[RMDB]
RNA sequence: GGGAACGACUCGAGUAGAGUCGAAAAGGAAGACAGUCGUCUGAAAGAGGCAUACAGCGCCUGUAUCAACACCGCACAAGGUUCGCCAGAAAAAAUUGAAGCCUGCCAGAGCGUGUUAAACGUGCUGAGUAAGCAACGAUUUCGAUCGUUGCUUACUAAAAGAAACAACAACAACAAC
Reactivity to DMS in 0.01 (KOAc 150mM, MgCl2 10mM, bicine 150mM(pH8.5), 24C), signal-to-noise 2, nucleotides 027 to 126: g010g000a110a070g010a080c020a090g000u000c040g010u000c040u000g000a080a100a110g000a060g000g010c040a070u000a150c080a040g020c080g020c040c030u000g010u000a060u010c090a100a060c050a040c070c020g050c070a060c130a110a080g010g040u000u000c070g000c050c020a160g020a000a020a030a130a120a100u010u000g000a070a190g030c040c030u010g050c080c010a050g000a140g000c010g000u000g000u000u000a060a080a040c070g020u000g030c030u000g000
Reactivity to 2A3 in 0.01 (KOAc 150mM, MgCl2 10mM, bicine 150mM(pH8.5), 24C), signal-to-noise 1, nucleotides 027 to 126: g070g030a000a070g040a050c000a010g110u080c030g020u080c050u030g020a020a040a040g100a080g050g020c040a100u130a190c030a030g060c020g010c070c010u000g050u050a060u060c000a010a040c020a010c040c040g050c010a040c040a180a000g050g040u050u040c040g020c030c030a020g130a130a080a010a010a000a000u080u080g030a060a010g000c000c010u020g010c010c040a020g010a010g060c020g010u000g000u050u180a050a140a010c020g000u030g000c000u010g040
An RNA of 177 nucleotides, treated with DMS and 2A3 and read out base by base. Source: RMDB library OK2TST, as collected in RNAgym. The reactions ran in a buffer of 150 mM KOAc, 10 mM MgCl2 and 150 mM bicine (pH 8.5), at 24 C. For 2A3 the reverse transcriptase was SuperScript II with manganese.